[RMDB]
RNA sequence: GGGAACGACUCGAGUAGAGUCGAAAAUGCUUGGCAAACUGCUAUCAAAAAUGUCGCCAGCUAGCAAGAUCAGAUCAGGUUGCUCGCGCUCCAAGUAUUGGUAGAGCUGGUUGAGCACAUCGAUAAACCAAUUCAGGAGAUUCGUCUCCUGAAUUGGAAAAGAAACAACAACAACAAC
Reactivity to DMS in 0.01 (KOAc 150mM, MgCl2 10mM, bicine 150mM(pH8.5), 24C), signal-to-noise 4, nucleotides 027 to 126: u000g000c040u020u000g010g020c050a100a060a100c090u000g020c060u020a070u020c100a040a070a060a080a090u000g000u000c080g010c020c020a040g010c010u000a060g020c040a070a100g010a080u000c060a070g000a200u010c060a110g020g010u000u000g010c010u000c150g010c160g000c030u000c030c020a030a140g010u000a100u000u010g000g010u000a070g010a160g020c000u000g000g030u020u000g000a090g020c020a060c060a050u000c100g010a110u010a090a100a210
Reactivity to 2A3 in 0.01 (KOAc 150mM, MgCl2 10mM, bicine 150mM(pH8.5), 24C), signal-to-noise 4, nucleotides 027 to 126: u060g010c020u070u140g030g000c030a070a110a100c090u120g080c030u070a030u160c060a070a060a060a040a040u060g030u050c050g000c010c000a010g010c030u030a000g000c000a040a040g000a140u080c060a030g070a170u070c030a030g110g000u130u050g010c010u010c030g040c000g000c010u000c000c020a100a050g050u070a090u160u130g000g030u070a020g000a020g050c060u080g080g000u070u090g010a010g020c010a000c010a030u080c040g060a060u080a150a080a050